[RMDB]
This 177-nucleotide RNA was probed chemically with 2A3. The data come from the RNA Mapping Database (RMDB), library RFM100. For 2A3, 1,251 sequencing reads were counted. The reactions ran in a buffer of 150 mM KOAc, 10 mM MgCl2 and 150 mM bicine (pH 8.5), at 24 C. 2A3 adducts were read by reverse transcription with SuperScript II with manganese.
RNA sequence: GGGAACGACUCGAGUAGAGUCGAAAAUGCUUAGGGCAAACACUCAUUUGGCCUUAAAUGGGAUCCUGUGAGAGGGGGUCCCUCCAUUGGCAGCUGGACUGUUCUUUGGGGCCUUAUGUGGUGUUUGGACUCGACGUCUUUUCGAAGACGUCGAGUCAAAAGAAACAACAACAACAAC
Reactivity to 2A3 in 0.01 (KOAc 150mM, MgCl2 10mM, bicine 150mM(pH8.5), 24C), signal-to-noise 2, nucleotides 027 to 126: u180g010c050u090u070a080g020g030g020c020a000a000a020c000a000c000u000c000a020u000u000u030g000g010c020c000u090u060a010a040a070u020g010g000g000a010u010c000c020u050g020u180g100a110g020a040g100g000g000g010g000u000c000c000c000u000c010c000a000u000u000g050g000c000a010g030c040u190g080g050a260c020u010g020u300u300c000u080u000u020g000g010g000g000c000c000u000u000a000u000g070u120g000g020u010g050u000u020u000g000